Structure probing data (DMS and 2A3) for a 177-nucleotide construct. DMS adducts were read by reverse transcription with MarathonRT. For DMS, 3,146 sequencing reads were counted. For 2A3 the reverse transcriptase was SuperScript II with manganese. Reactivities are given for positions 27 through 126. Source: RMDB library OK2TST, as collected in RNAgym.

RNA sequence: GGGAACGACUCGAGUAGAGUCGAAAAUGUUCAAGAAGAAGUCAUUAGCAGAUUGAAGCGGAGAACACAGAAUUGCACUGUACGUCAAACGGUAUCAACUCACUGGUAGGAAAUCGCUAAACGUCGGGUUUCCCUAUGUUUUCGAACAUAGGGAAACAAAAGAAACAACAACAACAAC
Reactivity to DMS in 0.01 (KOAc 150mM, MgCl2 10mM, bicine 150mM(pH8.5), 24C), signal-to-noise 4, nucleotides 027 to 126: u000g010u000u000c060a090a130g010a080a090g000a130a080g000u010c030a060u000u000a050g020c080a100g000a120u000u000g000a090a060g040c040g020g010a140g010a080a050c090a050c090a080g010a070a070u000u010g020c140a080c030u010g010u000a050c080g000u010c060a050a090a110c050g000g000u020a040u000c050a040a070c060u010c080a110c140u000g000g000u000a040g030g000a040a060a040u000c060g010c040u000a040a040a080c130g010u000c080g010g010
Reactivity to 2A3 in 0.01 (KOAc 150mM, MgCl2 10mM, bicine 150mM(pH8.5), 24C), signal-to-noise 3, nucleotides 027 to 126: u100g020u020u030c040a040a030g050a050a020g060a040a030g110u050c030a060u070u080a030g030c050a020g050a110u080u080g050a050a000g020c030g020g020a040g050a110a000c040a000c000a040g100a140a080u070u080g010c030a000c050u060g020u120a010c020g020u040c030a010a060a040c000g010g010u020a020u090c000a010a070c000u030c030a050c040u010g050g000u030a020g000g070a040a050a010u040c020g030c010u030a050a050a030c030g060u020c020g110g060